[RMDB]
RNA sequence: GGGAACGACUCGAGUAGAGUCGAAAAGAACUUACCACAGUUCACAGGUGACACGAUUCGUGAGAUUCUCGCAGAUAGUGAGGCGGUGGAUGCUAUUAAGGCAAAUAAAGUCGGUUACACAAUUUACCGUGAAGAAGGGUUUCGACCCUUCUUCACGAAAAGAAACAACAACAACAAC
Reactivity to DMS in 0.01 (KOAc 150mM, MgCl2 10mM, bicine 150mM(pH8.5), 24C), signal-to-noise 2, nucleotides 027 to 126: g020a040a040c010u000u020a140c120c100a100c130a030g040u000u000c010a170c130a140g000g000u000g000a130c050a090c060g000a140u000u010c080g020u000g000a080g000a140u000u010c020u000c010g010c060a110g000a050u010a060g000u020g000a040g010g030c130g020g020u000g020g000a100u000g030c000u000a140u000u010a030a120g000g000c040a010a080a050u000a050a030a060g010u000c060g030g010u000u010a030c050a040c160a030a110u000u010u010a150c150
Reactivity to 2A3 in 0.01 (KOAc 150mM, MgCl2 10mM, bicine 150mM(pH8.5), 24C), signal-to-noise 1, nucleotides 027 to 126: g010a000a000c020u020u050a110c040c000a070c140a080g010u000u040c010a020c020a090g010g190u060g010a010c030a000c180g120a090u170u170c060g040u040g160a070g000a150u140u000c050u000c000g000c000a030g040a220u140a020g080u020g000a010g040g010c080g020g030u050g010g030a070u050g010c010u070a060u280u120a200a080g050g020c050a050a000a140u210a040a110a000g060u010c000g020g000u020u060a050c120a000c000a060a040u050u060u130a100c000